This 177-nucleotide RNA was probed chemically with DMS and 2A3.
The reactions ran in a buffer of 150 mM KOAc, 10 mM MgCl2 and 150 mM bicine (pH 8.5), at 24 C.
It was measured as part of the RMDB libraries RFM100 and RFMREP.
For DMS the reverse transcriptase was MarathonRT.

RNA sequence: GGGAACGACUCGAGUAGAGUCGAAAAAUGAAUGCCAGUUCGCCCCAUAUUUCUCGUAGCUGCGCCGGUGCCCGUUGCAAUGCUUCCCGGCACCUGACGCGCAUCACGACGGCAUCAGCCGAGCCGCGUUUAAUGAGACAUUCGUGUCUCAUUAAACAAAAGAAACAACAACAACAAC
Reactivity to DMS in 0.01 (KOAc 150mM, MgCl2 10mM, bicine 150mM(pH8.5), 24C), signal-to-noise 8, nucleotides 027 to 126: a060u020g000a060a040u000g010c040c050a080g010u000u000c050g010c040c010c010c050a090u010a070u010u010u000c050u000c020g010u010a110g020c040u000g010c050g020c010c040g010g010u000g020c010c020c270g000u010u000g010c080a110a110u020g010c060u000u000c030c040c090g000g000c020a020c020c020u020g020a060c090g000c030g010c010a040u010c050a050c050g010a090c060g000g000c030a070u010c090a100g020c060c050g010a080g010c020c040g010c140
Reactivity to 2A3 in 0.01 (KOAc 150mM, MgCl2 10mM, bicine 150mM(pH8.5), 24C), signal-to-noise 9, nucleotides 027 to 126: a000u120g040a040a020u070g050c030c020a020g050u060u080c030g040c010c000c010c020a040u090a130u100u120u030c070u010c030g050u040a030g000c040u040g000c010g000c010c010g000g000u010g000c000c000c010g020u020u030g010c070a160a210u220g000c000u030u010c000c040c000g000g000c000a000c000c000u030g050a070c040g000c000g000c010a010u030c010a010c020g070a010c010g010g000c010a090u060c040a080g060c020c040g010a020g030c010c010g060c020